RNA sequence: GGGAACGACUCGAGUAGAGUCGAAAACGACUGCGUUUCGACGCAGUCGAACAUUAUGUGGUGAAAUAUAAAAGCCGAUAUUCCGAUACCAUAUAAUUUAAAUUACCUACGAGUUCGCUCGUAGGAACACUUGAUAGAACUUCGGUUCUAUCAAGUGAAAAGAAACAACAACAACAAC
Reactivity to 2A3 in 0.01 (KOAc 150mM, MgCl2 10mM, bicine 150mM(pH8.5), 24C), signal-to-noise 4, nucleotides 027 to 126: c010g000a010c000u000g000c000g000u030u000u120c140g030a010c000g000c010a000g010u000c000g000a000a000c000a010u020u030a010u020g000u010g000g020u060g060a050a150a000u110a010u030a040a260a090a090g140c050c050g040a030u020a090u070u010c040c020g080a060u060a170c000c000a000u030a000u010a020a070u060u120u210a120a190a140u120u130a110c000c000u000a010c000g000a000g030u030u100c200g060c080u000c000g010u000a000g000g000a010a010
Reactivity to DMS in 0.01 (KOAc 150mM, MgCl2 10mM, bicine 150mM(pH8.5), 24C), signal-to-noise 2, nucleotides 027 to 126: c000g020a020c000u000g000c010g010u000u000u010c180g010a030c000g020c000a000g020u000c000g000a030a060c110a030u000u000a010u010g020u010g000g010u010g020a010a030a000u010a010u000a040a040a080a150g010c080c070g000a020u010a020u010u000c010c020g010a120u010a030c000c000a000u000a010u000a010a010u010u020u000a050a050a120u010u000a140c010c000u000a010c000g000a010g020u000u020c260g020c000u000c000g010u000a000g010g000a050a090